Description
Chemical mapping of a 177-nucleotide RNA with DMS and 2A3.

RNA sequence: GGGAACGACUCGAGUAGAGUCGAAAAUGCUGCGGGCCCGGUAUGCGGUCAGCAGAUCGGUGAACAACACCCCAGCCGACCAGUGGUCGCCGGCGAUGUGAUGCACCACCAGCGACAACACGGUCUGCGAGAGGACCGAAUUCGUUCGGUCCUCUCGAAAAGAAACAACAACAACAAC
Reactivity to DMS in 0.01 (KOAc 150mM, MgCl2 10mM, bicine 150mM(pH8.5), 24C), signal-to-noise 1, nucleotides 027 to 126: u000g030c000u000g040c030g000g000g000c080c030c000g000g040u000a070u030g010c150g040g000u000c100a070g020c000a000g010a040u000c130g010g000u000g010a070a110c260a130a140c080a080c030c000c010c020a120g020c030c100g000a020c040c020a060g050u000g000g000u010c010g010c000c050g020g010c000g000a030u000g020u000g000a190u040g000c000a000c000c000a030c020c010a050g000c000g000a010c000a090a090c020a070c120g000g000u000c040u000g000
Reactivity to 2A3 in 0.01 (KOAc 150mM, MgCl2 10mM, bicine 150mM(pH8.5), 24C), signal-to-noise 1, nucleotides 027 to 126: u150g010c000u010g000c010g010g050g020c030c020c000g060g060u300a190u180g100c100g050g040u120c030a020g010c010a000g000a000u060c020g080g020u110g070a210a050c100a040a030c000a100c020c020c000c000a000g040c010c040g000a030c010c020a060g030u020g000g000u000c000g000c010c010g040g010c060g020a090u090g010u060g040a150u300g030c040a030c020c000a000c000c010a020g030c000g000a020c000a120a010c030a020c080g000g010u050c030u050g070

The RNA was probed in 150 mM KOAc, 10 mM MgCl2 and 150 mM bicine (pH 8.5) at 24 C. For 2A3, 1,102 sequencing reads were counted. The data come from the RNA Mapping Database (RMDB), library OK2TST.